[RMDB]
RNA sequence: GGGAACGACUCGAGUAGAGUCGAAAAGCGUACUACAUCGAGGAGGCUGGAGCGAAACUUGGCUACUCCCAAAUAGGAGUAGCUACAUGAGUUUCGCGUUGAAAGCCUCUCCCCACCGAUGUAUCGCAAAAUGGAUCUGGGUUCGCCCAGAUCCAAACCAUCCUUGAUAGUUCGCUAUCAAGGAUGGAAAAGAAACAACAACAACAAC
Reactivity to 2A3 in 0.01 (KOAc 150mM, MgCl2 10mM, bicine 150mM(pH8.5), 24C), signal-to-noise 4, nucleotides 027 to 156: g030c020g020u080a120c040u020a000c010a010u000c000g020a030g040g000a000g010g000c010u010g030g030a040g000c020g020a000a000a000c030u070u100g010g000c000u000a000c000u030c010c020c040a120a300a110u300a110g000g000a000g010u010a000g020c000u010a020c000a080u250g020a000g000u000u000u000c000g000c000g010u090u040g020a000a010a000g000c000c020u010c000u000c000c000c000c000a060c000c020g000a000u000g040u020a040u300c020g000c040a020a010a040a120u060g000g000a000u010c000u000g020g020g010u030u050c190g100c020c000c000a000g000a020u000c000c000a000a000a000
Reactivity to DMS in 0.01 (KOAc 150mM, MgCl2 10mM, bicine 150mM(pH8.5), 24C), signal-to-noise 2, nucleotides 027 to 156: g030c010g030u000a060c110u000a020c000a030u010c000g010a300g030g000a030g050g030c000u020g010g020a300g010c000g000a030a000a050c020u000u000g020g020c000u000a010c000u000c000c020c020a040a150a230u000a040g000g010a080g000u000a010g000c010u000a030c060a060u000g000a020g020u000u000u000c010g010c000g030u030u040g000a130a200a300g020c010c000u000c000u000c120c110c060c060a300c170c020g050a040u000g010u000a010u000c040g010c040a090a050a090a100u000g040g020a000u000c010u060g010g010g000u000u010c300g030c000c000c000a020g000a050u020c000c010a000a010a070
Source information
This 207-nucleotide RNA was probed chemically with 2A3 and DMS. The 2A3 profile rests on 4,277 reads. The DMS profile rests on 3,047 reads. It was measured as part of the RMDB library RNAMAK. DMS adducts were read by reverse transcription with MarathonRT.